[RMDB]
RNA sequence: GGGAACGACUCGAGUAGAGUCGAAAAGUCCAGGGUGUGCCGUGUCCUAUUCCACCGGCGCUGGCCUGAUAUUGUAGGGGACAAUGGACGUCAGUGCUUCAGCAGGUGGCGUGCCCGUCGCGGUGGAUCUUCAAACGUGGUUCGUCACGUUUGAGGGAAAAGAAACAACAACAACAAC
Reactivity to DMS in 0.01 (KOAc 150mM, MgCl2 10mM, bicine 150mM(pH8.5), 24C), signal-to-noise 9, nucleotides 027 to 126: g010u010c020c020a090g000g010g020u010g010u020g010c020c020g020u010g010u010c020c040u010a120u020u010c020c020a030c040c020g010g010c060g010c030u000g010g000c020c030u020g010a190u040a040u010u010g010u010a140g010g000g010g010a300c040a040a040u010g010g010a180c230g000u000c010a020g010u010g000c010u010u030c140a120g030c090a080g010g010u010g010g010c080g010u010g010c040c030c040g000u010c050g010c020g000g000u010g000g000a060
Reactivity to 2A3 in 0.01 (KOAc 150mM, MgCl2 10mM, bicine 150mM(pH8.5), 24C), signal-to-noise 9, nucleotides 027 to 126: g040u000c010c000a010g020g000g010u050g010u030g010c000c000g020u030g050u040c000c010u040a090u070u030c010c000a010c000c000g030g000c010g000c010u010g020g000c000c020u070g010a010u010a020u030u020g020u020a060g000g040g000g000a010c000a010a020u030g020g030a010c010g010u000c000a010g010u010g040c000u090u080c030a100g020c030a020g040g040u020g010g010c000g010u030g020c000c000c000g010u010c020g000c010g000g000u010g010g020a040